An RNA of 177 nucleotides, treated with DMS and 2A3 and read out base by base. The data come from the RNA Mapping Database (RMDB), library OK2TRN. DMS adducts were read by reverse transcription with MarathonRT. Reactivities are given for positions 27 through 126. For 2A3, 3,522 sequencing reads were counted.
RNA sequence: GGGAACGACUCGAGUAGAGUCGAAAAGGGUCGGGCCGCAGAGCACGGGGCAGGGUGGCCUCCCAGCACCUAGCCUUGUGCGCCCGGAGCUCUGUGUGCACGGCAGACCUCUCUGCUGCCGCCAGCCAUGGUCAGUGUUAUUCGUAACACUGACCAUAAAAGAAACAACAACAACAAC
Reactivity to DMS in 0.01 (KOAc 150mM, MgCl2 10mM, bicine 150mM(pH8.5), 24C), signal-to-noise 4, nucleotides 027 to 126: g010g020g020u000c020g010g010g020c010c050g010c010a020g010a070g010c010a090c040g000g000g000g010c020a300g000g010g020u000g030g000c030c060u000c030c020c030a290g000c020a040c020c030u010a230g020c020c030u000u010g030u010g010c030g000c010c010c000g000g000a080g010c020u000c010u010g000u000g000u000g020c040a070c020g010g000c000a050g000a160c060c030u000c050u000c020u000g010c020u000g000c020c020g010c060c050a130g010c060c130
Reactivity to 2A3 in 0.01 (KOAc 150mM, MgCl2 10mM, bicine 150mM(pH8.5), 24C), signal-to-noise 2, nucleotides 027 to 126: g130g030g030u050c030g030g010g000c010c030g000c050a010g000a000g010c030a000c000g000g000g060g030c030a050g020g030g130u080g070g050c000c030u070c020c000c000a010g010c010a030c010c010u020a030g000c020c030u070u110g040u090g030c050g140c040c010c000g010g000a040g000c010u000c000u010g010u020g060u110g030c030a010c040g020g010c040a000g040a050c000c010u010c010u000c040u060g000c000u020g020c020c020g010c030c030a040g010c050c020